[RMDB]
RNA sequence: GGGAACGACUCGAGUAGAGUCGAAAAACUAGUCCGUACGCGGACUCGAAGGGCCCCAGAAGACCAAGGGGCCCAAACCUACCACUCAUUAGAUGCAUGGAAAUCACUAGGUGAUACGUCACCUAGAACACGCUUUUAAGCUUCGGCUUAAAAGCAACAAACGGAUUAAGUUCGCUUAAUCCGUUUGAAAAGAAACAACAACAACAAC
Reactivity to 2A3 in 0.01 (KOAc 150mM, MgCl2 10mM, bicine 150mM(pH8.5), 24C), signal-to-noise 3, nucleotides 027 to 156: a000c010u000a020g010u000c020c000g020u020a050c260g000c010g130g000a000c000u020c000g130a150a140g000g000g000c020c000c000c010a090g090a300a020g070a140c080c080a090a050g030g000g000g000c000c000c000a000a000a000c010c000u040a010c010c010a040c030u080c010a030u080u120a050g040a110u110g050c050a040u090g080g080a100a090a070u150c060a060c050u000a000g000g010u000g000a010u010a040c180g040u000c010a000c000c000u000a000g000a000a020c070a000c100g010c000u000u000u020u010a000a000g000c000u040u100c120g020g010c000u000u000a000a000a000a000g010c000a010a000
Reactivity to DMS in 0.01 (KOAc 150mM, MgCl2 10mM, bicine 150mM(pH8.5), 24C), signal-to-noise 2, nucleotides 027 to 156: a030c080u000a080g010u000c000c020g070u000a120c180g060c000g050g000a010c000u010c080g010a120a190g000g030g040c010c020c010c050a110g010a150a120g000a190c050c130a100a170g010g010g080g000c010c000c000a000a010a030c010c010u000a160c010c000a060c040u010c040a170u000u000a120g010a120u010g000c050a100u010g010g000a040a130a090u010c060a210c010u000a000g010g040u010g010a090u000a060c280g000u000c000a010c000c010u010a010g000a050a080c170a100c150g070c000u020u000u000u000a000a010g010c000u010u000c260g060g050c010u010u000a010a000a000a000g000c000a060a030
This 207-nucleotide RNA was probed chemically with 2A3 and DMS. For 2A3, 1,711 sequencing reads were counted. It was measured as part of the RMDB library M2RFPK. 2A3 adducts were read by reverse transcription with SuperScript II with manganese. The RNA was probed in 150 mM KOAc, 10 mM MgCl2 and 150 mM bicine (pH 8.5) at 24 C. In probing experiments dimethyl sulfate is read out at A N1 and C N3, which are open when not base-paired. Reactivities are given for positions 27 through 156.